[RMDB]
RNA sequence: GGGAACGACUCGAGUAGAGUCGAAAAGGGAAAGUUGGAUGAGGUUCCAGUGCAGGGCCAUUCCUGAGUUACCGAUACAACGCGGGUUGAGGCAACGACAAGAGGUUUGCCCGUGCGCUCGCGUCCGCUCCUAGUACGGGUUCGCCCGUACUAGGAGAAAAGAAACAACAACAACAAC
Reactivity to DMS in 0.01 (KOAc 150mM, MgCl2 10mM, bicine 150mM(pH8.5), 24C), signal-to-noise 2, nucleotides 027 to 126: g000g000g000a040a060a040g000u000u000g030g000a040u000g000a150g000g000u010u000c020c030a110g030u050g060c100a170g000g030g000c140c070a110u020u020c000c010u000g020a100g020u000u030a090c030c040g000a200u010a070c120a060a050c000g010c000g050g000g000u000u020g000a090g010g040c040a000a000c050g030a150c270a120a120g030a110g000g000u000u010u000g000c030c000c010g030u040g000c130g000c050u000c000g020c020g000u020c060c060g010
Reactivity to 2A3 in 0.01 (KOAc 150mM, MgCl2 10mM, bicine 150mM(pH8.5), 24C), signal-to-noise 4, nucleotides 027 to 126: g080g000g040a080a020a070g050u120u100g060g000a110u040g080a090g080g110u120u120c000c050a030g080u100g110c090a100g000g020g000c040c010a050u040u040c000c000u030g000a040g030u050u100a050c020c040g000a020u070a120c070a030a010c000g000c050g000g020g070u050u280g080a170g050g000c010a000a000c040g090a120c060a100a140g050a060g060g130u040u050u060g000c000c010c020g020u110g080c080g000c000u000c000g010c010g000u010c000c030g010
This 177-nucleotide RNA was probed chemically with DMS and 2A3. For 2A3 the reverse transcriptase was SuperScript II with manganese. For DMS, 2,672 sequencing reads were counted. The reactions ran in a buffer of 150 mM KOAc, 10 mM MgCl2 and 150 mM bicine (pH 8.5), at 24 C. Reactivities are rounded to 0.1 and cut off at 0 and 3. Reactivities are given for positions 27 through 126. In probing experiments dimethyl sulfate is read out at A N1 and C N3, which are open when not base-paired.